An RNA of 177 nucleotides, treated with DMS and 2A3 and read out base by base. Reactivities are given for positions 27 through 126. The RNA was probed in 150 mM KOAc, 10 mM MgCl2 and 150 mM bicine (pH 8.5) at 24 C. Source: RMDB libraries RFM100 and RFMREP, as collected in RNAgym. The 2A3 profile rests on 3,615 reads.

RNA sequence: GGGAACGACUCGAGUAGAGUCGAAAAGGAGCGAGGCGUCGCGUACGGGGCUCGUCCGAGACCACACCUGAGGCCGGAUGCAGGAGCCCGCGCUGGUCGAGCCCGGGGAGGAGCGGAGAUCGAUGAAAGUAAGCGUUAGUUUCGACUAACGCUUACUAAAAGAAACAACAACAACAAC
Reactivity to DMS in 0.01 (KOAc 150mM, MgCl2 10mM, bicine 150mM(pH8.5), 24C), signal-to-noise 4, nucleotides 027 to 126: g010g020a100g040c020g010a090g030g000c040g000u020c120g030c020g020u030a130c090g010g000g000g010c010u000c010g000u020c000c020g010a120g010a130c010c010a070c120a210c180c130u030g000a090g010g000c020c000g000g000a060u020g000c110a110g020g010a040g010c010c010c020g010c010g000c020u030g010g020u010c020g010a190g000c020c020c010g020g000g010g010a080g000g010a200g000c110g000g000a080g000a110u010c060g020a110u020g000a090a110
Reactivity to 2A3 in 0.01 (KOAc 150mM, MgCl2 10mM, bicine 150mM(pH8.5), 24C), signal-to-noise 3, nucleotides 027 to 126: g080g000a080g010c040g010a020g050g000c030g040u100c050g010c020g020u030a040c080g050g000g000g000c000u000c000g020u000c000c010g030a060g030a230c010c010a050c000a050c040c100u130g100a090g040g000c010c020g000g020a030u070g060c090a080g100g070a020g010c000c000c000g000c020g000c010u050g040g040u060c040g000a010g010c010c010c010g000g000g000g010a090g030g020a120g010c090g010g020a060g000a030u070c100g030a040u110g080a100a070